[RMDB]
The record gives the reactivity of an RNA of 177 nucleotides to DMS and 2A3. The 2A3 profile rests on 4,300 reads. As a SHAPE reagent, 2A3 marks flexible, mostly unpaired nucleotides at the ribose 2'-OH. For DMS the reverse transcriptase was MarathonRT. The RNA was probed in 150 mM KOAc, 10 mM MgCl2 and 150 mM bicine (pH 8.5) at 24 C. The DMS profile rests on 5,603 reads. It was measured as part of the RMDB library OK2TST.

RNA sequence: GGGAACGACUCGAGUAGAGUCGAAAAAUCACAAGGAGUGUGGAAUACAAACAACUAACAAACCAAGGUUCUUUCAAACCGCAAACCAUCGUUAGUUUUGAAACCCCUGGCAGCUAUGCAAUUAACGCAAUUAUGAGUCUUUCGAGACUCAUAAUUGAAAAGAAACAACAACAACAAC
Reactivity to DMS in 0.01 (KOAc 150mM, MgCl2 10mM, bicine 150mM(pH8.5), 24C), signal-to-noise 6, nucleotides 027 to 126: a080u010c050a060c060a090a100g010g020a060g030u000g030u000g010g010a120a090u010a090c100a070a090a100c160a030a030c030u000a040a030c020a060a100a100c160c120a090a130g010g010u000u000c120u000u010u010c230a060a040a030c030c030g010c140a080a070a080c100c110a050u010c160g010u000u000a020g010u000u000u000u010g000a070a070a100c050c010c010c060u000g000g010c020a040g010c070u000a040u010g010c040a050a070u000u020a050a080c150g000
Reactivity to 2A3 in 0.01 (KOAc 150mM, MgCl2 10mM, bicine 150mM(pH8.5), 24C), signal-to-noise 4, nucleotides 027 to 126: a000u030c030a020c000a030a090g140g020a110g090u060g020u040g020g090a070a070u130a150c040a020a130a010c030a020a010c020u040a010a000c000a080a040a020c070c020a050a060g030g000u050u040c050u070u280u070c070a100a070a010c020c000g000c060a070a090a060c020c020a050u050c020g020u010u020a010g000u020u010u030u100g100a140a120a080c000c010c020c010u020g060g020c000a010g010c040u110a070u160g000c020a060a080u130u060a130a030c050g000